RNA sequence: GGGAACGACUCGAGUAGAGUCGAAAAUCAAAGUAGCAUAUUAAUAAUCGUCUUAUGCUACUGGGAGUAUGUGUAGAUUGUUACUACACAUACUCCAGUAGUCAGUAGUGUAAGACAUCUGACUGCAGAUAGUAAUGGCAUUCGUGUCGUUACUAUCAAAAGAAACAACAACAACAAC
Reactivity to DMS in 0.01 (KOAc 150mM, MgCl2 10mM, bicine 150mM(pH8.5), 24C), signal-to-noise 7, nucleotides 027 to 126: u020c070a080a110a080g010u010a030g020c040a050u020a120u010u030a100a100u020a110a070u030c210g010u000c010u000u000a010u000g000c000u000a000c000u000g000g010g010a020g000u000a000u000g010u000g010u010a000g000a070u010u030g010u020u040a050c000u000a000c000a000c000a000u000a000c000u010c010c010a050g010u030a100g010u070c010a010g000u000a030g020u000g000u000a020a030g010a050c010a020u010c080u000g010a090c080u000g010c050a130
Reactivity to 2A3 in 0.01 (KOAc 150mM, MgCl2 10mM, bicine 150mM(pH8.5), 24C), signal-to-noise 9, nucleotides 027 to 126: u140c050a060a070a050g060u080a020g040c060a030u080a080u260u190a170a120u200a210a090u230c120g010u000c020u010u000a000u000g000c000u000a000c000u000g040g000g000a000g000u000a000u000g010u000g000u000a000g010a100u050u160g070u150u160a040c000u000a000c000a000c000a000u000a000c000u000c000c000a000g000u020a010g040u030c000a000g000u020a010g000u010g010u030a010a010g000a020c000a000u010c010u020g060a040c020u030g000c020a030
Structure probing data (DMS and 2A3) for a 177-nucleotide construct.
2A3 is a SHAPE reagent: it acylates the 2'-hydroxyl of flexible nucleotides of all four kinds.
The DMS profile rests on 31,218 reads.
The 2A3 profile rests on 79,523 reads.
DMS adducts were read by reverse transcription with MarathonRT.
Reactivities are rounded to 0.1 and cut off at 0 and 3.